[RMDB]
RNA sequence: GGGAACGACUCGAGUAGAGUCGAAAAAUAGGAGCUGAAAUUUUAAUCAUUAAUAGAGAAGGUAAUAAAAUUGUUAUACCUUUUUUGGGAUGACUCAUUUCAAUCAAAUAGUAACAAUUACUGUUGCCAACUAACACAUUCUUAGUGCUUACCAUAACCUUUUACUGCGGUUCGCCGCAGUAAAAGGAAAAGAAACAACAACAACAAC
Reactivity to 2A3 in 0.01 (KOAc 150mM, MgCl2 10mM, bicine 150mM(pH8.5), 24C), signal-to-noise 1, nucleotides 027 to 156: a000u030a040g080g000a020g050c000u000g070a050a080a300u260u300u180u040a240a090u130c000a000u050u220a210a190u160a260g080a000g000a100a000g000g000u000a000a030u050a090a250a050a050u060u020g000u010u010a030u020a110c000c000u000u000u000u020u020u030g010g010g000a000u080g070a090c020u000c300a000u000u030u000c020a040a050u000c020a000a080a080u100a060g030u000a020a020c000a000a000u080u000a020c050u080g000u030u030g010c000c020a030a030c030u030a150a060c080a030c020a150u060u070c050u100u110a050g190u010g060c000u060u150a000c000c000a020u030a030a110
Conditions: 150 mM KOAc, 10 mM MgCl2 and 150 mM bicine (pH 8.5), 24 C. Structure probing data (2A3) for a 207-nucleotide construct. The 2A3 profile rests on 337 reads. It was measured as part of the RMDB library OK3TST.